[RMDB]
Structure probing data (2A3 and DMS) for a 177-nucleotide construct. The reactions ran in a buffer of 150 mM KOAc, 10 mM MgCl2 and 150 mM bicine (pH 8.5), at 24 C. For 2A3, 7,956 sequencing reads were counted. Source: RMDB library OK1LIB, as collected in RNAgym. DMS adducts were read by reverse transcription with MarathonRT.
RNA sequence: GGGAACGACUCGAGUAGAGUCGAAAAGCGAUUCAGAAUCAGAUAGUGACUCCGAUUCAGACAGCGAUUCAGAAUCAGAUAGUGACUCCGAUUCAGAUAGCGAUUCGGAUUCAGCGAGUGAUUCAGAAUUAACUAAUGCCUUCGGGCAUUAGUUAAUAAAAGAAACAACAACAACAAC
Reactivity to 2A3 in 0.01 (KOAc 150mM, MgCl2 10mM, bicine 150mM(pH8.5), 24C), signal-to-noise 8, nucleotides 027 to 126: g090c040g050a040u100u090c050a070g020a010a010u010c010a010g120a190u110a050g110u060g100a040c040u000c020c010g010a010u090u040c010a070g130a250c080a030g030c020g040a000u070u060c020a030g000a000a010u000c000a010g060a070u080a070g160u090g100a040c060u000c010c020g000a000u010u010c000a030g050a110u130a030g050c040g020a010u000u010c000g020g000a000u030u020c010a010g080c020g030a050g020u020g000a030u020u000c000a020g090a020
Reactivity to DMS in 0.01 (KOAc 150mM, MgCl2 10mM, bicine 150mM(pH8.5), 24C), signal-to-noise 6, nucleotides 027 to 126: g010c070g010a140u030u010c020a090g000a030a010u000c010a030g000a070u010a130g000u010g010a130c150u000c010c020g010a020u000u010c050a110g000a150c300a170g010c050g010a130u030u000c020a050g000a010a000u000c000a020g000a030u020a180g010u010g010a060c200u000c000c040g000a030u000u000c000a070g020a050u020a070g020c060g000a040u010u000c000g010g000a010u000u000c110a140g010c010g010a110g010u010g000a020u000u010c000a080g010a070